[RMDB]
RNA sequence: GGGAACGACUCGAGUAGAGUCGAAAAUUGAGCUUGAUGGACAGGGUUAUAGCUGUGGAUCAGUUGACAUCAUCUUCUAGUGAUGAACUGCAAGACUAUGAAGACCUUGCCUUGGCACUCACAAGCGGGGUACAUUACUUUUCGAAGUAAUGUACCCAAAAGAAACAACAACAACAAC
Reactivity to DMS in 0.01 (KOAc 150mM, MgCl2 10mM, bicine 150mM(pH8.5), 24C), signal-to-noise 6, nucleotides 027 to 126: u010u010g010a070g010c010u010u000g010a300u000g010g000a030c010a020g010g010g000u010u000a050u000a100g010c040u000g010u000g020g010a300u000c020a020g000u000u000g010a120c030a020u000c010a010u000c120u010u020c200u010a140g020u000g000a030u000g010a050a030c020u000g000c050a060a250g000a050c030u010a060u010g000a080a180g000a030c020c030u000u000g000c010c010u000u000g000g000c270a040c060u010c040a080c180a040a070g000c180g020
Reactivity to 2A3 in 0.01 (KOAc 150mM, MgCl2 10mM, bicine 150mM(pH8.5), 24C), signal-to-noise 4, nucleotides 027 to 126: u040u070g020a010g010c010u040u040g010a040u080g100g010a040c010a020g030g030g010u060u110a080u050a030g020c050u090g100u090g300g010a070u090c000a010g020u030u040g090a060c030a020u010c010a010u030c030u250u030c100u200a040g030u000g040a040u000g020a030a010c010u010g000c030a040a030g050a150c000u020a020u160g130a120a040g040a030c010c000u010u010g000c010c000u000u040g030g000c050a050c120u070c010a040c010a030a020g000c070g030